[RMDB]
The data come from the RNA Mapping Database (RMDB), library RSTRND. An RNA of 207 nucleotides, treated with 2A3 and read out base by base. The RNA was probed in 150 mM KOAc, 10 mM MgCl2 and 150 mM bicine (pH 8.5) at 24 C. Values cover nucleotides 27 to 156.
RNA sequence: GGGAACGACUCGAGUAGAGUCGAAAAUCACACGGAAUCGUCGGGUCUUAUGUGUUUGGAUAAGACUUGACUAAACUUAACAAACUCGCUUAAUGUGAUCCCUGCUGGCCGGGCAGCAUUAAGUUAAAAUAAUAGACCAAAUAAACAUGUAGAGUUUAUCAGUAGUAGAGUUCGCUCUACUACUGAUAAAAGAAACAACAACAACAAC
Reactivity to 2A3 in 0.01 (KOAc 150mM, MgCl2 10mM, bicine 150mM(pH8.5), 24C), signal-to-noise 5, nucleotides 027 to 156: u110c020a030c020a020c140g150g120a090a120u180c080g000u010c010g000g020g000u000c000u000u000a000u010g090u010g030u010u030u000g010g000a000u000a010a000g000a000c000u000u020g020a000c000u020a010a020a020c060u090u220a070a000c000a010a010a010c010u000c020g000c010u000u000a000a000u020g070u090g100a300u270c000c000c000u000g010c000u010g000g020c010c000g000g010g000c010a010g000c000a010u000u010a000a000g000u000u020a020a020a040a090u190a050a000u010a020g020a010c020c000a040a080a100u170a070a140a050c120a090u120g090u160a040g050a090g180u010u010u000